Chemical mapping of a 177-nucleotide RNA with DMS.
DMS adducts were read by reverse transcription with MarathonRT.
Conditions: 150 mM KOAc, 10 mM MgCl2 and 150 mM bicine (pH 8.5), 24 C.
Values cover nucleotides 27 to 126.
RNA sequence: GGGAACGACUCGAGUAGAGUCGAAAAAUUGUUAUCGUGAUUGUUUGUUUGGUGACGAUUUGUUUGGUGACUGUUGGUUGAAAGCAGUGACUGAACGACGCUUUCGACUCGGUCUGAAAACUGUAUAGGGGAAACAUUAUUUCGAUAAUGUUUCCCCAAAAGAAACAACAACAACAAC
Reactivity to DMS in 0.01 (KOAc 150mM, MgCl2 10mM, bicine 150mM(pH8.5), 24C), signal-to-noise 1, nucleotides 027 to 126: a020u000u000g000u000u000a010u000c010g000u000g010a070u000u010g020u000u000u000g000u000u000u000g030g010u000g000a030c010g010a030u000u000u000g010u000u000u020g010g010u010g000a010c010u000g010u010u000g000g000u000u000g000a010a060a020g040c010a070g030u010g030a150c190u010g000a090a120c070g010a080c200g010c010u000u020u000c000g010a010c010u000c020g000g020u000c010u000g000a100a020a040a070c050u020g020u010a120u020a200